An RNA of 177 nucleotides, treated with 2A3 and DMS and read out base by base. For 2A3 the reverse transcriptase was SuperScript II with manganese. Reactivities are rounded to 0.1 and cut off at 0 and 3. The reactions ran in a buffer of 150 mM KOAc, 10 mM MgCl2 and 150 mM bicine (pH 8.5), at 24 C. It was measured as part of the RMDB library M2PK90. The DMS profile rests on 766 reads.

[RMDB]
RNA sequence: GGGAACGACUCGAGUAGAGUCGAAAAGAAAAAGGAGGACAUGUCCGCCUGAUUGUGUCGGACCCUGUAGAUACUUCGCUCUGGAAAUUGUGCGGGACAACCCACGCGCGCAGCGAGCCGAAAAAAAGGAUGUAUGCAAGUUCGCUUGCAUACAUCCAAAAGAAACAACAACAACAAC
Reactivity to 2A3 in 0.01 (KOAc 150mM, MgCl2 10mM, bicine 150mM(pH8.5), 24C), signal-to-noise 1, nucleotides 027 to 126: g020a000a080a000a000a000g080g020a040g020g010a040c020a080u190g000u050c040c000g010c000c000u090g120a220u020u210g110u050g000u000c010g000g030a040c030c020c000u000g060u090a110g050a120u080a100c020u060u060c010g040c000u050c030u100g100g140a020a060a080u190u050g010u040g000c000g000g010g040a010c020a050a040c000c000c010a110c020g200c030g000c000g000c000a000g080c040g020a010g000c070c020g180a080a050a000a000a000a000a070
Reactivity to DMS in 0.01 (KOAc 150mM, MgCl2 10mM, bicine 150mM(pH8.5), 24C), signal-to-noise 1, nucleotides 027 to 126: g000a050a010a070a100a050g000g030a040g000g000a030c120a150u000g000u000c000c010g000c070c030u000g020a240u010u010g010u030g000u020c030g000g000a220c020c030c020u000g010u010a230g010a080u010a050c080u000u010c010g010c060u000c020u010g000g000a080a090a040u010u020g010u010g000c020g000g000g010a120c120a040a080c090c010c020a160c060g000c010g000c070g010c010a010g010c060g010a080g000c040c020g000a000a010a050a080a030a000a120